[RMDB]
RNA sequence: GGGAACGACUCGAGUAGAGUCGAAAAACCAGCAUGCACACACAUAUUGUCAUGAGGCCACGUGGGUCUCCUCAGAUGCCCCAACAGGGCCUGUGCUGGGAAGGGGUGGGGCUGAGGGUGGCUGCUGUAUAGGGUGUAGUUUCGACUACACCCUAUAAAAAGAAACAACAACAACAAC
Reactivity to DMS in 0.01 (KOAc 150mM, MgCl2 10mM, bicine 150mM(pH8.5), 24C), signal-to-noise 4, nucleotides 027 to 126: a110c060c010a050g010c030a030u020g010c060a060c080a060c130a130c150a090u010a110u010u020g010u010c090a050u020g020a060g010g010c000c020a090c180g010u010g010g010g020u000c100u000c020c080u020c080a050g000a090u000g010c020c010c010c020a090a100c150a140g000g010g020c030c070u000g010u020g010c050u000g010g000g020a110a080g000g000g000g010u000g010g000g000g000c050u010g000a060g000g000g010u000g000g000c050u000g000c070u000g030
Reactivity to 2A3 in 0.01 (KOAc 150mM, MgCl2 10mM, bicine 150mM(pH8.5), 24C), signal-to-noise 2, nucleotides 027 to 126: a000c020c000a020g000c020a020u100g050c040a020c000a000c000a000c030a250u100a150u250u180g050u080c040a040u080g030a030g030g000c010c010a070c120g060u180g040g030g010u020c000u040c020c010u050c030a040g010a100u090g010c000c000c010c010a080a060c050a050g060g030g050c010c030u080g010u090g020c030u040g010g010g030a030a030g050g000g020g080u130g050g030g060g000c130u110g030a080g020g020g000u050g030g000c060u060g000c020u050g050
Conditions: 150 mM KOAc, 10 mM MgCl2 and 150 mM bicine (pH 8.5), 24 C. An RNA of 177 nucleotides, treated with DMS and 2A3 and read out base by base. Values are in units of 0.01, from 0 to 300, in steps of 10. For 2A3 the reverse transcriptase was SuperScript II with manganese.